[RMDB]
About this RNA: Chemical mapping of a 177-nucleotide RNA with 2A3. 2A3 adducts were read by reverse transcription with SuperScript II with manganese. Conditions: 150 mM KOAc, 10 mM MgCl2 and 150 mM bicine (pH 8.5), 24 C. Values cover nucleotides 27 to 126.

RNA sequence: GGGAACGACUCGAGUAGAGUCGAAAAUGUGGACUUCCUGGUGCCCGUGAUGGGCUAUAUCUGCCGCAUCUGCCACAAGUUCUAUCACAGCAACUCAGGGGCACAGCUCUCCCACUGCAAGUCCCUGACUCCGAGGACCGUUCGCGGUCCUCGGAGUAAAAGAAACAACAACAACAAC
Reactivity to 2A3 in 0.01 (KOAc 150mM, MgCl2 10mM, bicine 150mM(pH8.5), 24C), signal-to-noise 1, nucleotides 027 to 126: u280g020u060g030g050a040c010u000u030c080c010u000g070g050u010g050c000c010c030g080u080g090a300u180g000g000g060c000u000a000u000a000u010c070u020g000c000c000g130c020a000u010c010u060g000c030c040a060c060a150a000g010u050u070c030u090a060u070c020a010c000a020g140c040a000a060c050u040c040a020g010g010g000g000c000a040c010a050g000c040u000c010u010c040c000c000a000c000u020g010c020a030a060g000u000c020c090c000u020g000